[RMDB]
RNA sequence: GGGAACGACUCGAGUAGAGUCGAAAACGCCAGUGGCAGGUGAUCGGUACGUUAUGUGCUGAGUCGCAAGCUAUAAGCGCACAUGCGAUGCGCGUCGCUGCGCAAAUCAGAAUCCGCCAACCUAGCAUCUAGGCUACCGCUUCGGUGGUAGUCUAGAAAAAGAAACAACAACAACAAC
Reactivity to DMS in 0.01 (KOAc 150mM, MgCl2 10mM, bicine 150mM(pH8.5), 24C), signal-to-noise 9, nucleotides 027 to 126: c110g010c030c040a130g020u010g000g010c010a060g010g010u010g000a100u010c020g010g010u000a030c020g020u030u050a040u050g010u010g000c000u000g000a070g010u010c020g000c030a050a060g010c010u010a070u020a110a130g000c020g010c030a040c060a150u020g000c140g000a130u010g000c010g010c010g000u010c220g020c050u020g000c040g000c050a040a060a100u020c080a050g010a110a080u010c030c010g000c030c030a060a100c080c040u010a080g000c140a160
Reactivity to 2A3 in 0.01 (KOAc 150mM, MgCl2 10mM, bicine 150mM(pH8.5), 24C), signal-to-noise 9, nucleotides 027 to 126: c070g060c010c010a050g040u060g050g000c050a050g000g050u020g020a060u040c010g000g010u020a020c030g060u170u270a120u300g030u020g000c000u020g010a020g060u070c010g000c040a050a030g000c010u040a030u030a230a030g010c010g030c010a010c010a050u220g110c060g130a130u030g010c010g000c010g030u030c020g000c010u020g000c010g000c000a010a020a050u050c030a020g040a060a030u020c010c010g000c010c000a040a050c020c010u030a030g030c010a060